An RNA of 207 nucleotides, treated with DMS and 2A3 and read out base by base. The 2A3 profile rests on 1,502 reads. DMS (dimethyl sulfate) methylates the pairing face of unpaired adenines and cytosines. High 2A3 reactivity points to a flexible backbone, as in loops and unpaired stretches. The reactions ran in a buffer of 150 mM KOAc, 10 mM MgCl2 and 150 mM bicine (pH 8.5), at 24 C.
[RMDB]
RNA sequence: GGGAACGACUCGAGUAGAGUCGAAAACCGCGGGCCGGCUGUUCUUCUUUCCCUUCUCUCGUCUUCCUCGGUCAACCUCUUGAGUUCCUCUUCCUCCUCCUUGCUCAGGCGCUUCCCUCCACUGCUCAGCUGCUUCCUCUUGUUCUUGAGGGCCUUCACAUAGAGACUUGUUCGCAAGUCUCUAUGUAAAAGAAACAACAACAACAAC
Reactivity to DMS in 0.01 (KOAc 150mM, MgCl2 10mM, bicine 150mM(pH8.5), 24C), signal-to-noise 1, nucleotides 027 to 156: c010c050g060c060g000g010g080c020c040g010g020c010u000g010u000u000c050u010u000c030u000u000u000c020c020c020u000u000c020u000c020u000c030g020u000c020u000u010c020c020u000c040g050g020u010c020a100a140c040c020u000c020u010u000g010a130g030u000u000c030c000u010c050u000u010c000c010u010c030c020u000c020c020u000u000g030c020u000c050a090g030g020c030g000c060u010u010c030c000c000u000c040c030a100c020u000g010c020u000c040a130g020c010u010g000c030u000u000c020c000u000c020u000u000g020u010u010c100u000u000g010a130g010g020g010c060c020u020u010c030
Reactivity to 2A3 in 0.01 (KOAc 150mM, MgCl2 10mM, bicine 150mM(pH8.5), 24C), signal-to-noise 1, nucleotides 027 to 156: c020c010g050c070g000g040g020c020c040g040g000c060u050g040u050u050c030u090u030c010u050u080u030c030c010c000u060u030c060u000c020u020c020g060u020c060u110u030c020c020u010c030g000g040u040c030a070a100c000c010u080c030u030u120g060a050g030u060u090c000c020u000c010u080u030c020c020u080c000c000u000c000c030u020u060g040c020u020c080a030g070g000c030g020c060u080u080c020c000c000u050c020c010a040c010u030g020c010u010c040a030g000c030u040g030c000u070u030c000c000u050c000u050u090g020u060u060c000u060u050g010a050g000g010g020c000c000u060u060c050